Source: RMDB library OK1LIB, as collected in RNAgym. An RNA of 177 nucleotides, treated with 2A3 and DMS and read out base by base. For DMS the reverse transcriptase was MarathonRT. 2A3 adducts were read by reverse transcription with SuperScript II with manganese. In probing experiments dimethyl sulfate is read out at A N1 and C N3, which are open when not base-paired.

[RMDB]
RNA sequence: GGGAACGACUCGAGUAGAGUCGAAAAGAGGACGGACUACUGGCUGUCUCCGGAGUAGGCAGAGGCUGUAUCCGGUCUGCAAACACGACAGGGCUGGAAUGUCACCUGGAGUGGACGUCCGAAGAGAGGGAUGCUUCUGGUUCGCCAGGAGCAUCCCAAAAGAAACAACAACAACAAC
Reactivity to 2A3 in 0.01 (KOAc 150mM, MgCl2 10mM, bicine 150mM(pH8.5), 24C), signal-to-noise 2, nucleotides 027 to 126: g070a060g000g000a000c010g000g040a040c010u060a010c000u050g070g000c000u010g000u080c000u030c040c040g070g020a050g010u180a010g010g000c030a050g050a140g300g010c030u060g120u260a100u000c000c000g010g000u000c010u000g000c000a090a100a010c050a000c120g050a010c030a020g000g000g040c000u140g000g210a190a170u140g050u090c010a040c120c000u010g010g010a000g000u000g000g010a000c000g020u000c000c000g020a070a000g060a000g010a030
Reactivity to DMS in 0.01 (KOAc 150mM, MgCl2 10mM, bicine 150mM(pH8.5), 24C), signal-to-noise 2, nucleotides 027 to 126: g000a130g000g000a060c010g010g000a090c070u020a130c080u010g040g000c000u000g010u020c050u000c020c010g020g030a060g000u070a030g010g000c000a160g000a180g020g000c050u000g040u040a160u020c040c040g000g000u000c010u000g010c080a110a080a170c140a030c200g020a100c020a070g000g000g000c020u000g000g010a130a150u010g000u040c080a100c020c000u000g000g000a090g030u000g010g010a070c000g000u000c010c000g020a110a070g000a100g000a300
For 2A3, 1,759 sequencing reads were counted.